The record gives the reactivity of an RNA of 170 nucleotides to 2A3 and DMS. Values are in units of 0.01, from 0 to 300, in steps of 10. The RNA was probed in 150 mM KOAc, 10 mM MgCl2 and 150 mM bicine (pH 8.5) at 24 C. The 2A3 profile rests on 10,820 reads.

RNA sequence: GGGAACGACUCGAGUAGAGUCGAAAAGGUUUGACUUUUCAAACUGUGCGGCCUGGCAAUUUUAACCAAGACUUCUAUGAUUUCGUGGUAUCUAAAGGUUUCUUUAAGGAGGGCUCUUCAGUGACGCUAGCGGAUCUGUUCGCAGAUCCGAAAAGAAACAACAACAACAAC
Reactivity to 2A3 in 0.01 (KOAc 150mM, MgCl2 10mM, bicine 150mM(pH8.5), 24C), signal-to-noise 7, nucleotides 027 to 129: g050g010u050u050u070g040a030c040u080u110u070u090c040a050a020a030c030u060g060u060g050c020g000g010c000c000u010g020g010c020a040a030u070u080u050u160a020a000c020c000a040a000g010a040c020u070u000c040u150a130u220g040a060u110u080u060c040g020u020g070g040u060a090u040c070u140a090a100a100g080g000u020u030u010c000u000u030u020a080a020g040g020a020g000g030g010c020u020c000u120u060c010a070g040u020g060a000c020g030c080u040a050g050
Reactivity to DMS in 0.01 (KOAc 150mM, MgCl2 10mM, bicine 150mM(pH8.5), 24C), signal-to-noise 5, nucleotides 027 to 129: g090g030u050u020u030g040a110c180u010u000u010u000c050a060a030a060c080u000g030u020g040c060g000g050c080c020u020g000g000c080a010a000u030u040u050u010a090a110c090c040a060a070g030a080c100u000u000c020u050a090u000g010a060u040u050u010c080g040u030g000g060u010a000u040c090u000a050a130a110g040g010u000u000u000c000u010u100u000a060a140g050g020a050g000g010g000c040u020c040u040u020c090a010g030u000g050a090c050g030c100u030a080g040